[RMDB]
RNA sequence: GGGAACGACUCGAGUAGAGUCGAAAAUGCUUCAUCAUUGAUACUCAUGCCUUCAAGAAUUUGUAUGCUCCUUCUUAGAUGCAUGUUUCAGAAGGGGGAAGGGAAGAAUUUGAUCACCUUAAAAGGACCUUUAGAAACGUAAGAGUGAAAGUGAACCCCUGUUGUCGUUUUUCGAAACGACAACAGGAAAAGAAACAACAACAACAAC
Reactivity to 2A3 in 0.01 (KOAc 150mM, MgCl2 10mM, bicine 150mM(pH8.5), 24C), signal-to-noise 1, nucleotides 027 to 156: u090g020c020u010u030c020a050u080c000a060u020u080g040a040u050a120c000u000c010a020u070g070c010c000u060u060c020a060a040g060a170a240u190u170u170g050u020a060u050g080c010u020c020c000u010u040c040u050u040a050g000a000u010g110c060a030u170g120u030u070u070c020a020g020a080a000g020g000g030g000g000a030a030g130g000g030a060a030g050a080a120u130u110u260g010a080u070c020a020c010c000u050u090a100a030a000a000g030g000a020c030c030u020u030u140a010g000a070a070a000c010g010u060a040a120g020a000g120u040g050a080a000a000g040u020g040a050a090c000c070
Chemical mapping of a 207-nucleotide RNA with 2A3. Values cover nucleotides 27 to 156. The 2A3 profile rests on 453 reads.